This 207-nucleotide RNA was probed chemically with 2A3 and DMS. Reactivities are given for positions 27 through 156. 2A3 adducts were read by reverse transcription with SuperScript II with manganese. The 2A3 profile rests on 1,910 reads. Conditions: 150 mM KOAc, 10 mM MgCl2 and 150 mM bicine (pH 8.5), 24 C. For DMS, 3,557 sequencing reads were counted.
[RMDB]
RNA sequence: GGGAACGACUCGAGUAGAGUCGAAAAGGAAUUGGAAGGUCAUCCUUCACAGGAUCGUGUGGAAGUCCUGCUCGGGGCGGAAGCAUUACAACCAUUCGAGCUAGUCAAUGCGUGGCGUGUCUCUCCGGUGUUUCUCUGGACUUCGGUCCAGAGAAAACUACCAAAGUCAGUUCGCUGACUUUGGUAGAAAAGAAACAACAACAACAAC
Reactivity to 2A3 in 0.01 (KOAc 150mM, MgCl2 10mM, bicine 150mM(pH8.5), 24C), signal-to-noise 3, nucleotides 027 to 156: g040g020a030a070u130u130g030g030a020a030g030g040u100c040a080u130c030c000u010u110c050a040c010a070g040g010a040u070c050g040u030g000u030g080g020a060a040g000u040c000c000u020g100c110u080c100g010g000g010g000c030g030g000a020a000g030c020a010u040u170a070c000a070a050c010c010a030u050u080c080g000a010g010c050u060a010g090u080c040a070a080u120g020c050g040u020g000g000c010g030u050g050u020c010u010c000u010c040c010g030g020u030g040u020u040u010c000u000c000u000g000g000a000c000u040u030c230g110g000u000c000c000a000g000a000g000a000a000a000a000
Reactivity to DMS in 0.01 (KOAc 150mM, MgCl2 10mM, bicine 150mM(pH8.5), 24C), signal-to-noise 2, nucleotides 027 to 156: g010g030a050a140u010u010g010g010a070a060g010g040u000c090a130u010c020c030u010u000c110a120c040a160g030g000a020u000c090g000u000g020u000g020g010a200a170g010u000c030c030u000g000c070u000c060g030g000g000g000c060g000g010a270a130g020c060a070u000u000a080c070a070a160c020c020a150u000u000c020g010a050g020c060u000a100g000u010c080a040a060u000g000c010g000u000g000g030c030g050u010g000u000c010u000c030u000c000c010g020g020u000g000u000u000u000c010u000c000u000g010g000a030c000u000u010c280g060g000u000c000c000a020g000a010g000a000a000a010a120